[RMDB]
RNA sequence: GGGAACGACUCGAGUAGAGUCGAAAAUCAUGGUGCUUCCUGGAGUGGUGGACCCAGACCUUAUGACACUUUAUACAGGCUCACUUCUGGGUGGCAUGUCUUUUGGUGGUCUUUCUUCUGCUGCCUCUGACGCCAUCUUAUUCGUAAGAUGGCGUCAAAAAGAAACAACAACAACAAC
Reactivity to 2A3 in 0.01 (KOAc 150mM, MgCl2 10mM, bicine 150mM(pH8.5), 24C), signal-to-noise 1, nucleotides 027 to 126: u080c020a050u100g050g000u010g020c030u050u070c000c000u000g000g000a030g030u090g050g070u020g010g050a040c000c000c020a040g080a170c030c000u100u100a090u160g050a040c040a030c090u090u100u060a110u020a050c060a040g040g020c030u040c060a030c000u160u030c010u050g000g000g010u000g020g020c020a000u080g020u050c000u030u160u060u060g080g010u020g000g000u010c000u000u100u020c020u100u060c000u020g000c020u030g020c040c000u030c040
Reactivity to DMS in 0.01 (KOAc 150mM, MgCl2 10mM, bicine 150mM(pH8.5), 24C), signal-to-noise 2, nucleotides 027 to 126: u010c080a110u000g030g010u000g000c070u000u000c020c030u000g000g010a070g050u000g020g020u010g000g010a120c060c010c050a090g020a110c110c050u000u010a060u000g030a080c120a050c100u010u000u010a090u000a130c200a110g020g020c090u000c030a030c080u000u000c080u020g000g000g010u000g030g000c020a020u000g000u000c040u000u010u000u010g010g010u000g000g000u000c050u000u000u010c030u000u000c020u000g000c040u000g010c010c010u000c130
Notes:
Chemical mapping of a 177-nucleotide RNA with 2A3 and DMS. Source: RMDB library OK2TST, as collected in RNAgym. The reactions ran in a buffer of 150 mM KOAc, 10 mM MgCl2 and 150 mM bicine (pH 8.5), at 24 C. The 2A3 profile rests on 1,317 reads.